[RMDB]
RNA sequence: GGGAACGACUCGAGUAGAGUCGAAAAGACGAACGUAAACACAAAUGUUCCACGGUGCAGAAGGGUCCCUCACAUGAGGAUCACCCAUGUAACUCGGACAGGAUAUGCUUUUGGGAAAAAGAGAGAAGAUGGAACAAAGGUUCGCCUUUGUUCCAUCAAAAGAAACAACAACAACAAC
Reactivity to DMS in 0.01 (KOAc 150mM, MgCl2 10mM, bicine 150mM(pH8.5), 24C), signal-to-noise 2, nucleotides 027 to 126: g040a080c130g000a090a040c090g000u000a050a090a070c100a070c100a040a090a150u000g000u020u000c030c050a050c160g000g030u010g000c020a010g000a100a090g020g000g020u010c140c000c020u000c030a160c240a090u020g010a010g020g000a040u010c170a020c010c000c020a100u000g010u000a060a050c020u000c140g010g000a020c030a040g000g000a110u000a030u000g000c010u020u000u010u000g010g000g000a060a030a020a030a060g000a100g020a110g000a080a050
Reactivity to 2A3 in 0.01 (KOAc 150mM, MgCl2 10mM, bicine 150mM(pH8.5), 24C), signal-to-noise 2, nucleotides 027 to 126: g080a020c080g030a110a000c050g080u160a080a190a030c070a020c030a120a120a100u090g020u160u000c020c010a020c060g020g010u000g000c010a020g040a220a140g070g000g020u000c040c020c000u000c030a240c060a180u300g000a010g010g020a020u120c020a010c000c000c010a010u020g010u010a030a080c000u020c040g000g030a000c010a030g010g060a060u030a020u220g020c010u060u060u050u040g050g050g040a040a080a020a070a000g130a010g020a000g020a110a020